An RNA of 207 nucleotides, treated with 2A3 and DMS and read out base by base.
RNA sequence: GGGAACGACUCGAGUAGAGUCGAAAACGAACGGCAACCGAGGCAUAUAUUGUGUUGAACCCUGACGCGUCUGUUGCUGAAGUGACUGAAGCAAACACUGAUCAGACAGCAGAAGACGUUGCUGCAUUUGCAACCGUUGCUGAACGACUGUUUGGUCACCAGUGAAUCCAUUCGUGGAUUCACUGGUAAAAGAAACAACAACAACAAC
Reactivity to 2A3 in 0.01 (KOAc 150mM, MgCl2 10mM, bicine 150mM(pH8.5), 24C), signal-to-noise 3, nucleotides 027 to 156: c030g100a040a020c050g000g000c020a010a020c020c030g030a020g050g050c060a030u080a020u030a060u160u200g030u120g100u150u140g110a080a110c040c000c000u060g050a050c070g010c020g190u040c010u020g030u010u000g000c020u010g030a060a020g040u030g040a040c050u080g070a060a040g100c070a010a060a040c020a010c070u040g000a080u020c000a010g050a100c000a020g000c000a000g030a140a020g040a150c030g000u020u020g000c010u050g020c010a130u130u100u210g000c010a010a020c040c060g030u030u070g050c030u040g020a070a030c070g110a080c070u000g030u020u010u030g060g010u000c020
Reactivity to DMS in 0.01 (KOAc 150mM, MgCl2 10mM, bicine 150mM(pH8.5), 24C), signal-to-noise 2, nucleotides 027 to 156: c060g010a290a210c050g040g000c030a040a100c030c030g000a280g000g050c050a050u010a070u000a130u010u080g010u000g040u010u010g010a070a100c060c030c010u000g020a050c060g030c030g030u000c050u000g010u000u000g020c020u040g030a060a280g000u010g010a300c080u010g000a070a100g020c050a070a100a120c050a090c070u010g010a110u000c020a040g010a120c000a020g030c020a070g010a220a110g000a050c070g000u000u010g020c010u030g010c070a300u000u000u010g030c020a060a120c010c030g020u000u000g010c030u000g000a080a080c040g010a080c030u010g000u000u000u000g010g010u010c100
Reactivities are rounded to 0.1 and cut off at 0 and 3. For DMS the reverse transcriptase was MarathonRT. The RNA was probed in 150 mM KOAc, 10 mM MgCl2 and 150 mM bicine (pH 8.5) at 24 C. For DMS, 3,001 sequencing reads were counted.